[RMDB]
RNA sequence: GGGAACGACUCGAGUAGAGUCGAAAAGAGAGUCUGUGUUGUACACUGAAGGGUUAACAGUGUACAACAUAGUACUAUAUGUGACAGCUACCUCACCUGUCACGUGUGACUGCUCGUUAUGCAUGGGAAGUUGGACCAUGCGUAACAACUUGUUGGCAGUCCAACUUCCUGCCGACAGGGAGCAGUCUUCGAGGGUGCGUGAGGUAGGCAUUUUCGAAAGUACUAUGCUAGUACAGCUUAACCCUUGCUGUACUAGCACAGACUCUAGAGCACAGUUCGCUGUGUUCAAAAGAAACAACAACAACAAC
Reactivity to 2A3 in 0.01 (KOAc 150mM, MgCl2 10mM, bicine 150mM(pH8.5), 24C), signal-to-noise 9, nucleotides 027 to 266: g170a000g000a000g000u010c000u000g000u000g000u000u000g000u000a000c000a000c010u020g040a190a130g120g040g020u080u080a070a000c000a010g000u000g000u000a000c000a000a000c000a000u000a000g000u000a000c000u010a000u030a030u200g080u030g070a060c050a040g030c020u020a020c010c010u030c000a010c000c030u120g090u160c020a010c040g030u050g030u050g010a000c000u000g010c000u010c030g220u130u060a080u110g020c040a030u080g020g010g020a050a040g050u050u050g030g010a020c040c060a120u090g010c020g040u050a010a000c020a070a050c050u100u180g010u010u020g040g000c000a010g020u010c000c010a000a000c000u040u020c000c000u010g010c000c010g050a040c020a020g040g040g010a000g000c000a000g000u000c010u010u010c020g050a050g020g060g040u030g010c050g010u020g020a020g020g020u010a010g020g060c020a030u070u060u060u110c050g110a140a070a010g000u000a000c000u000a000u010g000c000u000a000g000u000a000c000a000g000c000u070u120a100a090c030c020c000u020u050g000c000u000g000u000a000c000u000a000g000c000a000c000a000g000a000c000u000c000u000a010
Reactivity to DMS in 0.01 (KOAc 150mM, MgCl2 10mM, bicine 150mM(pH8.5), 24C), signal-to-noise 9, nucleotides 027 to 266: g010a040g010a010g010u000c000u000g010u000g000u000u000g010u000a000c000a000c000u000g000a090a070g010g000g000u000u000a050a300c010a010g000u000g000u000a000c000a000a000c000a000u000a000g000u000a000c000u000a070u010a090u020g010u010g010a080c300a120g000c010u000a020c010c020u000c010a020c060c030u000g000u000c010a040c010g020u000g010u010g010a010c000u000g000c000u000c010g010u010u000a070u010g010c030a100u010g000g000g000a020a030g010u000u000g000g000a040c010c140a090u000g000c000g020u010a010a020c030a090a100c180u010u010g020u000u000g000g010c040a120g000u000c020c020a020a020c040u000u000c030c000u000g000c110c070g010a120c040a070g000g000g000a010g000c000a000g000u000c000u000u000c020g010a110g010g000g010u000g010c300g010u000g000a030g010g010u000a010g010g010c040a030u000u000u010u000c070g010a120a110a030g010u000a010c000u000a010u000g010c000u000a010g010u000a000c000a000g000c000u000u000a050a080c110c090c080u000u000g000c000u000g000u000a000c000u000a000g000c000a000c000a010g000a010c000u000c010u000a080

Description
Chemical mapping of a 307-nucleotide RNA with 2A3 and DMS. For DMS the reverse transcriptase was MarathonRT. It was measured as part of the RMDB library POS240. 2A3 is a SHAPE reagent: it acylates the 2'-hydroxyl of flexible nucleotides of all four kinds.